[RMDB]
RNA sequence: GGGAACGACUCGAGUAGAGUCGAAAAGAUAUGGACACUCCGAUAAGAUCUGUUCGGAAACGAACAAGAUCUUUUGACGGAGGGUCCUAAGUCAAAAGAACCAAGUGUGUUCGCACACUUGGUUCAAGAGAGCGUAAUAGUUCGCUAUUACGCUCUCAAAAGAAACAACAACAACAAC
Reactivity to DMS in 0.01 (KOAc 150mM, MgCl2 10mM, bicine 150mM(pH8.5), 24C), signal-to-noise 3, nucleotides 027 to 126: g000a010u000a120u020g000g000a020c000a030c000u000c000c000g010a060u010a010a010g010a000u000c000u000g010u000u000c010g010g000a020a010a060c000g010a020a010c000a030a060g010a000u000c000u000u000u000u000g010a250c030g010g000a010g010g010g020u000c000c010u000a000a050g010u010c000a090a080a160a170g000a010a000c000c000a000a010g010u000g040u000g020u000u020c250g010c010a000c000a010c000u000u000g000g010u000u000c000a030a110
Reactivity to 2A3 in 0.01 (KOAc 150mM, MgCl2 10mM, bicine 150mM(pH8.5), 24C), signal-to-noise 2, nucleotides 027 to 126: g000a000u040a020u060g000g000a000c000a000c030u000c010c010g040a060u100a300a020g010a010u000c010u000g000u010u000c010g000g020a050a020a020c010g010a000a000c100a010a040g000a000u010c010u010u020u040u020g030a000c000g020g000a010g000g010g010u000c000c010u010a040a000g010u010c030a060a000a050a230g020a000a010c000c000a000a000g010u010g000u010g010u040u150c300g100c120a000c000a000c000u000u000g000g010u000u000c000a010a000